[RMDB]
RNA sequence: GGGAACGACUCGAGUAGAGUCGAAAAUGUGAUUCACCCAAAUAAUGCCCGUUUAGGUAUCCUCCAUACUUUAGGAUGUGUACCGGUUGACGUGAUGCCCAUUGACUGUCAGGUCUCUUGUAUGGAAGAUGCUAGUACUGUUCGCAGUACUAGCAUCAAAAGAAACAACAACAACAAC
Reactivity to DMS in 0.01 (KOAc 150mM, MgCl2 10mM, bicine 150mM(pH8.5), 24C), signal-to-noise 4, nucleotides 027 to 126: u000g010u000g030a120u010u000c100a130c030c020c030a090a100a080u020a090a100u010g000c020c010c040g010u000u000u000a080g020g010u000a030u010c050c040u000c020c020a070u000a040c140u000u000u000a080g010g010a030u000g020u010g000u010a040c080c030g020g000u000u000g000a050c070g020u000g020a070u000g010c020c010c030a110u000u000g010a070c040u000g010u000c080a080g000g000u000c030u000c050u000u000g000u010a060u000g000g000a090a120
Reactivity to 2A3 in 0.01 (KOAc 150mM, MgCl2 10mM, bicine 150mM(pH8.5), 24C), signal-to-noise 3, nucleotides 027 to 126: u140g030u070g040a080u100u070c050a090c030c010c010a010a040a030u150a020a050u110g010c020c020c040g080u090u080u100a070g010g000u050a020u000c010c010u010c000c010a030u030a150c060u130u130u110a090g060g020a030u060g060u010g020u130a030c020c010g000g010u030u070g020a010c030g030u060g040a030u080g040c000c040c020a050u020u060g010a010c010u010g030u120c020a040g060g020u000c020u000c000u070u100g060u090a060u100g010g020a050a070